[RMDB]
Source: RMDB libraries RFM100 and RFMREP, as collected in RNAgym.
This 177-nucleotide RNA was probed chemically with DMS and 2A3.
Conditions: 150 mM KOAc, 10 mM MgCl2 and 150 mM bicine (pH 8.5), 24 C.
DMS adducts were read by reverse transcription with MarathonRT.
RNA sequence: GGGAACGACUCGAGUAGAGUCGAAAACCUCACCCCUCACCAGCAGGGACCCUCCAAGAGCCUCUGCUGAAUUUAUGUGGCUGACAAAGGAAAACAAUUUUCUGAGCUGCCUAUUUAAGAACCCCUCGACUAGCACUAGAUUCGUCUAGUGCUAGUCAAAAGAAACAACAACAACAAC
Reactivity to DMS in 0.01 (KOAc 150mM, MgCl2 10mM, bicine 150mM(pH8.5), 24C), signal-to-noise 5, nucleotides 027 to 126: c020c000u000c100a210c030c000c010c000u000c090a080c220c030a000g010c010a040g010g000g000a040c010c030c020u000c180c250a100a120g000a060g000c030c000u000c000u000g000c000u000g000a100a040u030u030u010a020u030g010u010g010g020c010u010g000a160c060a020a080a070g000g000a020a030a060a140c230a150a090u010u000u000u010c010u000g000a250g000c000u000g000c000c030u000a040u020u020u000a100a110g010a080a180c040c000c000c000u020c080
Reactivity to 2A3 in 0.01 (KOAc 150mM, MgCl2 10mM, bicine 150mM(pH8.5), 24C), signal-to-noise 5, nucleotides 027 to 126: c000c010u040c070a090c000c010c010c000u030c020a080c050c000a010g030c000a000g000g020g020a010c030c000c020u120c040c060a150a060g030a040g070c000c000u030c000u000g000c000u000g020a020a020u050u110u080a130u140g090u040g010g010c010u030g020a160c030a030a140a020g040g030a030a020a020a020c140a140a200u010u020u050u020c010u050g010a020g020c010u010g000c020c010u040a050u000u130u080a090a030g020a030a060c010c000c000c000u050c050